Structure probing data (2A3) for a 207-nucleotide construct.
As a SHAPE reagent, 2A3 marks flexible, mostly unpaired nucleotides at the ribose 2'-OH.
The reactions ran in a buffer of 150 mM KOAc, 10 mM MgCl2 and 150 mM bicine (pH 8.5), at 24 C.
For 2A3, 338 sequencing reads were counted.

RNA sequence: GGGAACGACUCGAGUAGAGUCGAAAACAAAAUUUACUAUAAUAUCUGCUAGCAACCCACCUAAAAUGGCACCAAUUUCUUCUGUUCUGCCUGGUAGUGAAUUGUGAAUUACACAGUAGCUUGGAGUUUGCUUCAGAUUGGCAAGAAGAAAUAAAAAAUCAACGUACUUGUUCGCAAGUACGUUGAUAAAAGAAACAACAACAACAAC
Reactivity to 2A3 in 0.01 (KOAc 150mM, MgCl2 10mM, bicine 150mM(pH8.5), 24C), signal-to-noise 1, nucleotides 027 to 156: c000a030a090a110a150u300u300u230a200c110u300a240u190a300a300u210a080u110c040u040g060c020u000a000g000c000a080a050c000c010c010a000c000c010u090a070a150a000a100u080g020g010c060a040c040c010a060a010u000u060u000c040u080u000c030u060g000u110u030c020u020g000c000c000u000g080g000u000a080g000u010g040a130a110u090u050g040u000g010a020a000u300u300a020c020a000c020a080g040u000a040g030c020u080u020g060g000a080g050u080u060u030g030c010u060u000c020a040g020a140u000u000g050g000c020a020a000g080a040a000g010a020a210a000u250a000a190a050a020a000